[RMDB]
RNA sequence: GGGAACGACUCGAGUAGAGUCGAAAAGAUAUGGAACUGUAGGGAGAUGUGAUAUCGGAAACGAUAUCCAUCGAAGAACUAUUUCCUAAGUCAAACGUGUCUUGUGUGUUCGCACACAAGACACGAACUCACACGAGUGGUUCGCCACUCGUGUGAGAAAAGAAACAACAACAACAAC
Reactivity to DMS in 0.01 (KOAc 150mM, MgCl2 10mM, bicine 150mM(pH8.5), 24C), signal-to-noise 1, nucleotides 027 to 126: g030a010u000a300u090g010g000a020a000c300u030g000u010a030g000g010g030a090g000a000u010g000u000g010a000u000a000u020c000g000g010a040a080a030c000g010a000u000a000u000c000c000a000u000c000g000a170a130g000a020a090c010u000a010u000u010u000c000c010u000a080a120g000u010c030a080a130a290c030g010u000g000u010c000u000u000g000u000g010u000g010u000u020c260g020c060a000c000a000c000a010a020g000a010c000a000c040g000a020a030